[RMDB]
This 177-nucleotide RNA was probed chemically with DMS and 2A3. Source: RMDB library OK1LIB, as collected in RNAgym. For 2A3, 2,009 sequencing reads were counted. 2A3 adducts were read by reverse transcription with SuperScript II with manganese.

RNA sequence: GGGAACGACUCGAGUAGAGUCGAAAAUUCUGGGAGCGGCUGGAUGGAAGAGCCUCGCACAGAGACAAACGUGGAAAGGGUGGGAAUACCCCUUUCAGAAUGAGGCCACCCGGAGGCAAGUCAGGUCGAGAGUGUCACUUUUCGAAGUGACACUCUCAAAAGAAACAACAACAACAAC
Reactivity to DMS in 0.01 (KOAc 150mM, MgCl2 10mM, bicine 150mM(pH8.5), 24C), signal-to-noise 1, nucleotides 027 to 126: u030u030c020u000g030g000g010a040g030c130g000g090c060u000g010g010a260u000g000g000a130a050g020a280g010c000c080u010c020g000c060a110c050a150g010a110g020a170c220a040a050a090c190g000u000g020g000a000a000a090g000g020g000u010g000g000g020a060a130u000a110c060c000c000c000u000u000u020c020a040g000a100a110u010g000a060g000g000c000c000a030c060c000c020g000g010a160g000g000c080a060a030g000u000c030a020g010g020u020c070
Reactivity to 2A3 in 0.01 (KOAc 150mM, MgCl2 10mM, bicine 150mM(pH8.5), 24C), signal-to-noise 3, nucleotides 027 to 126: u060u020c010u030g030g040g010a110g060c060g030g010c030u010g000g100a050u030g030g020a050a000g020a060g080c020c000u000c000g040c020a100c020a030g150a010g030a090c090a050a150a000c120g070u080g010g050a010a030a040g020g000g010u140g030g030g080a050a050u240a210c000c000c000c020u030u020u000c010a000g040a020a120u220g000a010g000g000c000c020a040c010c050c000g020g020a020g000g000c030a030a100g050u070c050a000g040g030u130c060